RNA sequence: GGGAACGACUCGAGUAGAGUCGAAAAAUUUAAUUAAAAGGUCUAUCAUUUUGAUAUGUGUAUGUCUCUAAGUAGCCUCAAGAUAUAGUAAGGAAAAAGGUAAAUUGGACUUGAUUGUACAAGUCAAACACUUUUGUACAUCACAGGACAUUGUGAACAGUGAUAAUCGAUUCGUCGAUUAUCACUGAAAAGAAACAACAACAACAAC
Reactivity to DMS in 0.01 (KOAc 150mM, MgCl2 10mM, bicine 150mM(pH8.5), 24C), signal-to-noise 1, nucleotides 027 to 156: a110u000u000u000a050a100u010u000a050a050a150a090g000g000u000c000u000a030u010c040a070u020u000u000u000g030a030u020a050u000g020u000g000u010a050u000g000u000c020u000c010u000a030a070g030u000a090g000c070c030u000c040a040a050g020a060u020a020u010a090g030u000a060a090g020g020a040a070a080a040a030g010g020u000a020a110a060u000u020g000g010a090c010u000u020g000a110u000u010g040u010a060c000a000a020g020u000c010a070a080a080c110a110c070u000u010u000u000g030u000a020c020a070u000c010a010c110a050g000g020a110c040a120u000u000g000u010g030a110a300
Reactivity to 2A3 in 0.01 (KOAc 150mM, MgCl2 10mM, bicine 150mM(pH8.5), 24C), signal-to-noise 2, nucleotides 027 to 156: a000u150u130u110a020a040u040u180a020a190a040a060g000g010u000c010u050a010u110c030a060u040u100u140u230g040a080u110a010u200g030u000g020u040a040u060g020u000c010u010c000u040a070a130g010u030a040g050c040c040u060c060a030a010g070a010u040a040u060a190g030u100a020a050g020g060a020a020a010a020a020g030g010u060a030a060a140u090u100g020g000a020c000u010u010g020a040u060u090g010u020a000c000a020a020g030u070c040a050a060a010c060a000c020u050u040u010u030g000u010a030c020a070u020c000a020c010a010g030g030a040c010a010u030u170g030u040g040a030a000
Chemical mapping of a 207-nucleotide RNA with DMS and 2A3.
For 2A3 the reverse transcriptase was SuperScript II with manganese.
DMS adducts were read by reverse transcription with MarathonRT.
As a SHAPE reagent, 2A3 marks flexible, mostly unpaired nucleotides at the ribose 2'-OH.